Source: RMDB libraries RFM100 and RFMREP, as collected in RNAgym. Chemical mapping of a 177-nucleotide RNA with 2A3 and DMS. The reactions ran in a buffer of 150 mM KOAc, 10 mM MgCl2 and 150 mM bicine (pH 8.5), at 24 C. High DMS reactivity at an A or C suggests that its Watson-Crick edge is free. 2A3 is a SHAPE reagent: it acylates the 2'-hydroxyl of flexible nucleotides of all four kinds.

RNA sequence: GGGAACGACUCGAGUAGAGUCGAAAAUGCCAUUUUAGUUUUUGACGGAGAUUCGAAUGAACUUAAGUUUAUGAUGAAGGUAUGGCUGUUGAGAUUAUUUGGUCGGGAUUGUAGUUUGAAGAUGUGCACAUCAUAUUACUUUCGAGUAAUAUGAUGUAAAAGAAACAACAACAACAAC
Reactivity to 2A3 in 0.01 (KOAc 150mM, MgCl2 10mM, bicine 150mM(pH8.5), 24C), signal-to-noise 8, nucleotides 027 to 126: u100g010c010c010a050u060u060u040u110a070g010u010u020u000u070u100g050a040c040g070g010a090g010a120u060u050c010g060a080a100u080g010a040a030c010u110u100a210a030g050u020u020u070a090u130g090a060u110g050a030a020g050g000u130a030u080g050g000c020u020g060u060u050g060a090g000a050u020u050a050u070u160u070g030g000u030c040g040g010g010a020u020u080g020u030a040g040u020u050u120g040a060a020g040a070u090g040u080g070c030
Reactivity to DMS in 0.01 (KOAc 150mM, MgCl2 10mM, bicine 150mM(pH8.5), 24C), signal-to-noise 9, nucleotides 027 to 126: u010g010c030c020a100u020u010u010u010a070g010u000u000u000u010u010g010a100c060g010g000a120g000a130u000u010c030g010a130a060u010g010a030a030c040u000u010a090a130g010u000u000u000a040u010g000a130u020g010a060a050g000g010u010a040u000g000g010c030u000g010u010u000g000a070g000a070u000u000a050u000u010u000g010g010u000c050g000g010g010a090u000u000g010u000a060g010u000u000u010g010a060a080g010a080u010g010u000g010c160
Values cover nucleotides 27 to 126.